[RMDB]
RNA sequence: GGGAACGACUCGAGUAGAGUCGAAAAACUGCUCGAGAACCUCUUCUCUGCCUCCGCGGCCUUUCUUCGACUCGGAACGGCUCAUCUCGGCUAGAGGCGGCAGUCCUCAGUACUCUUACUCUUUUCUGUAAAGAGGAGACUGCUGGACUCGCCGCCCGGCUAUUACUUAGUUCGCUAAGUAAUAGCCAAAAGAAACAACAACAACAAC
Reactivity to 2A3 in 0.01 (KOAc 150mM, MgCl2 10mM, bicine 150mM(pH8.5), 24C), signal-to-noise 3, nucleotides 027 to 156: a000c000u010g000c000u030c010g050a040g050a220a100c010c020u050c010u060u030c020u010c040u070g050c000c030u050c060c050g030c090g080g010c000c000u030u110u060c030u060u100c060g080a070c020u040c070g000g050a050a020c030g010g010c030u040c030a120u060c030u040c020g040g040c030u090a030g030a160g130g000c000g000g000c010a000g000u000c000c000u000c000a030g020u120a300c040u000c030u090u180a260c010u040c000u100u240u150u080c130u250g250u300a010a000a050g000a000g010g000a010g000a000c010u010g050c130u010g000g000a000c000u000c040g010c000c000g000c000c000c000